Chemical mapping of a 207-nucleotide RNA with DMS and 2A3.

RNA sequence: GGGAACGACUCGAGUAGAGUCGAAAAGAAUCACCGUACCUAGUUAGGUUUACGCUCCAAGAUCGGUGGAUAGCAGCCCUAUCAAUAUCUAGGAGAACUGUGCUAUGUUUAGAAGAUUAGGUAGUCUAUUACACAGCCAUGUUCGCAUGGCUGUGAAUCAUUGCGUGGUAUUCGUACCACGCAAUGAAAAAGAAACAACAACAACAAC
Reactivity to DMS in 0.01 (KOAc 150mM, MgCl2 10mM, bicine 150mM(pH8.5), 24C), signal-to-noise 2, nucleotides 027 to 156: g020a130a110u000c020a220c000c020g000u000a050c020c000u000a100g020u010u010a040g000g000u010u000u010a040c060g000c010u000c010c010a120a120g000a050u000c070g030g060u000g010g020a070u000a070g040c060a200g030c180c120c030u000a110u000c060a080a080u000a080u000c040u000a130g010g010a140g000a070a070c050u020g020u000g000c100u000a100u000g010u010u010u000a150g010a090a140g010a120u010u000a040g010g010u010a150g010u000c010u000a090u000u010a210c000a000c020a000g020c000c000a010u010g000u010u000c230g010c010a070u000g010g000c000u000g020u010g010a030a090
Reactivity to 2A3 in 0.01 (KOAc 150mM, MgCl2 10mM, bicine 150mM(pH8.5), 24C), signal-to-noise 3, nucleotides 027 to 156: g050a020a090u080c020a010c030c000g040u040a020c010c000u030a030g130u160u120a040g030g030u000u070u100a020c040g010c020u000c010c000a020a030g010a060u050c040g010g100u080g120g000a030u040a040g040c040a040g020c030c000c000u040a060u090c070a090a050u040a010u180c020u020a020g000g050a020g010a040a050c070u050g030u030g070c020u050a010u070g110u060u120u040a100g020a180a020g060a120u050u090a060g040g030u000a020g020u000c020u060a120u070u120a060c000a000c000a010g000c010c000a000u000g000u030u070c130g020c100a000u000g000g000c000u000g000u000g000a000a000